The record gives the reactivity of an RNA of 207 nucleotides to 2A3 and DMS.
Source: RMDB library M2RFPK, as collected in RNAgym.
The reactions ran in a buffer of 150 mM KOAc, 10 mM MgCl2 and 150 mM bicine (pH 8.5), at 24 C.
The DMS profile rests on 3,232 reads.
RNA sequence: GGGAACGACUCGAGUAGAGUCGAAAAGAAAGAAAGAAAGCGGUUGGGUGGGUCCAUCGACCGUCGUGGCGUAUUCGGACGCAUUACCACGACGCGAGGAAAUAGCGAGACCGACCACCCCCUUUAACAGAGGUAUAGUAGUUCGCUACUAUACCAACUACAUAAAUCUCUUCGGAGAUUUAUGUAGAAAAGAAACAACAACAACAAC
Reactivity to 2A3 in 0.01 (KOAc 150mM, MgCl2 10mM, bicine 150mM(pH8.5), 24C), signal-to-noise 3, nucleotides 027 to 156: g040a010a050a000g040a040a130a010g050a030a100a030g120c150g030g070u150u090g100g020g040u050g060g010g000u000c030c010a090u090c010g020a060c040c000g010u010c010g000u010g010g010c080g020u070a120u080u220c100g090g060a020c020g020c060a030u080u100a020c030c000a000c010g000a000c000g000c010g020a030g040g050a030a150a050u090a030g080c060g020a030g030a090c020c010g020a030c000c010a030c000c000c000c000c010u050u070u040a130a050c110a050g080a060g120g000u000a000u000a000g000u000a000g010u020u060c220g010c130u010a010c000u000a010u000a000c000c000a000a000
Reactivity to DMS in 0.01 (KOAc 150mM, MgCl2 10mM, bicine 150mM(pH8.5), 24C), signal-to-noise 2, nucleotides 027 to 156: g010a200a100a130g000a200a130a170g010a080a090a140g000c110g030g010u010u000g000g020g020u000g000g020g000u000c000c000a070u000c060g000a070c120c010g010u000c010g020u000g010g030c010g010u000a040u000u000c050g020g000a170c110g030c100a110u000u000a020c010c010a000c000g010a000c000g000c040g000a160g010g010a020a100a130u000a090g000c050g010a180g000a090c020c010g010a020c010c010a040c000c010c000c010c020u000u000u010a070a130c100a170g020a170g040g020u000a010u000a000g000u000a030g000u010u010c270g050c020u000a010c000u000a010u010a000c000c020a010a050